[RMDB]
RNA sequence: GGGAACGACUCGAGUAGAGUCGAAAACUGGAACGCACGUUUAGCGGGAAGCGCCUCCUGGAGGUGAUGGACAGUCUCGACGCCAAGCAGUGGUCCGUGGCGCAGGCGCUCCCGUGCUUGGAGCCCAUAACUCUGGGCAAUUCGUUGCCCAGAGUUAAAAAGAAACAACAACAACAAC
Reactivity to DMS in 0.01 (KOAc 150mM, MgCl2 10mM, bicine 150mM(pH8.5), 24C), signal-to-noise 2, nucleotides 027 to 126: c010u000g000g010a020a030c050g020c120a070c110g020u000u000u000a140g000c000g000g000g000a040a070g010c000g010c000c000u030c130c110u010g030g010a110g030g040u000g000a020u000g000g000a070c050a050g020u020c010u020c030g000a080c090g000c000c000a130a070g010c020a090g020u000g000g000u000c000c000g000u000g000g000c060g000c160a000g000g000c060g000c010u010c010c000c010g000u000g010c010u000u000g000g000a230g020c000c020c020a160
Reactivity to 2A3 in 0.01 (KOAc 150mM, MgCl2 10mM, bicine 150mM(pH8.5), 24C), signal-to-noise 3, nucleotides 027 to 126: c020u040g050g060a090a030c040g040c070a070c160g050u050u050u080a020g010c000g030g000g030a070a020g020c010g010c010c010u080c040c090u140g110g050a100g000g150u070g030a060u040g000g040a010c050a110g110u020c020u040c060g050a040c050g010c020c000a040a040g020c010a040g010u030g090g000u020c000c020g040u070g030g050c170g000c070a020g000g000c000g000c010u000c000c010c000g000u000g000c000u000u020g020g000a030g050c010c010c020a030